[RMDB]
RNA sequence: GGGAACGACUCGAGUAGAGUCGAAAAUAACGGACUAGGAAACUCGAUCUUUUAAGUGGUAAUCCUAGCGAAUCCACGGCGAGGAAACUAGGACACUAACCAUGUGAUGCCGGACGCUAGAAGAAAACUAUGUCUCUUGAUUCGUCAAGAGACAUAGAAAAGAAACAACAACAACAAC
Reactivity to 2A3 in 0.01 (KOAc 150mM, MgCl2 10mM, bicine 150mM(pH8.5), 24C), signal-to-noise 4, nucleotides 027 to 126: u120a050a040c050g020g010a010c020u030a030g010g070a120a110a060c010u010c010g070a140u090c140u080u300u090u180a250a050g010u040g040g010u040a060a050u020c000c010u000a030g020c020g000a010a030u000c010c010a030c060g060g020c050g020a010g020g030a000a090a050c010u010a020g000g030a010c020a010c070u050a050a040c000c010a030u060g020u050g060a090u110g070c020c000g020g030a020c030g000c060u020a030g030a130a010g030a000a160a010a000
Reactivity to DMS in 0.01 (KOAc 150mM, MgCl2 10mM, bicine 150mM(pH8.5), 24C), signal-to-noise 5, nucleotides 027 to 126: u010a080a120c080g010g020a120c030u010a030g000g000a070a140a140c030u000c020g030a080u010c060u000u010u010u020a060a160g010u000g020g000u000a110a100u000c030c000u000a040g020c050g000a170a160u010c020c020a060c060g010g000c040g010a040g000g000a080a060a100c030u000a020g010g010a090c060a040c080u000a050a110c150c090a120u010g000u000g010a110u000g000c020c010g000g000a100c070g010c030u000a040g000a100a080g000a050a050a050a120